This 207-nucleotide RNA was probed chemically with 2A3 and DMS. The RNA was probed in 150 mM KOAc, 10 mM MgCl2 and 150 mM bicine (pH 8.5) at 24 C. 2A3 adducts were read by reverse transcription with SuperScript II with manganese. For DMS, 1,967 sequencing reads were counted. The 2A3 profile rests on 808 reads. The data come from the RNA Mapping Database (RMDB), library M2RFPK.
RNA sequence: GGGAACGACUCGAGUAGAGUCGAAAAGAAUCACCGUACCUAUUUAGGUUUACGCUCCAAGAUCGGUGGAUAGCAGCCCUAUCAAGAUCUAGGAGAACUGUGCUAUGUUUAGAAGAUUAGGUAGUCUAUUACACAGCCAUGUUCGCAUGGCUGUGAACAUUGAAUGAGCCUUCGGGCUCAUUCAAUGAAAAGAAACAACAACAACAAC
Reactivity to 2A3 in 0.01 (KOAc 150mM, MgCl2 10mM, bicine 150mM(pH8.5), 24C), signal-to-noise 2, nucleotides 027 to 156: g000a040a030u110c010a000c070c000g040u040a010c010c000u100a130u150u150u290a050g010g030u010u050u140a030c030g020c020u010c020c000a030a000g000a010u020c040g020g300u080g210g000a030u000a000g030c110a000g020c050c000c000u020a010u010c020a020a040g000a010u010c000u010a070g010g000a020g000a010a040c060u050g010u000g070c040u060a040u180g060u100u080u030a080g010a170a060g020a220u190u050a010g070g020u010a010g040u040c010u040a080u060u060a010c000a000c000a000g000c000c000a020u000g060u060u110c180g080c080a000u000g000g030c010u000g000u000g000a000a000
Reactivity to DMS in 0.01 (KOAc 150mM, MgCl2 10mM, bicine 150mM(pH8.5), 24C), signal-to-noise 2, nucleotides 027 to 156: g000a080a130u000c000a300c010c030g030u000a060c000c000u010a130u010u000u040a000g010g040u000u030u010a050c110g010c000u000c020c030a100a080g010a030u000c020g030g000u000g010g010a040u000a060g070c010a300g000c180c230c020u020a080u000c010a220a170g000a060u000c000u000a180g010g010a060g000a010a090c080u010g080u000g010c030u010a110u010g080u000u000u000a080g020a130a110g010a130u000u010a140g000g030u010a070g010u000c030u000a080u020u000a240c030a010c000a010g010c000c010a010u010g020u000u000c300g000c030a000u000g000g000c000u000g020u010g000a020a140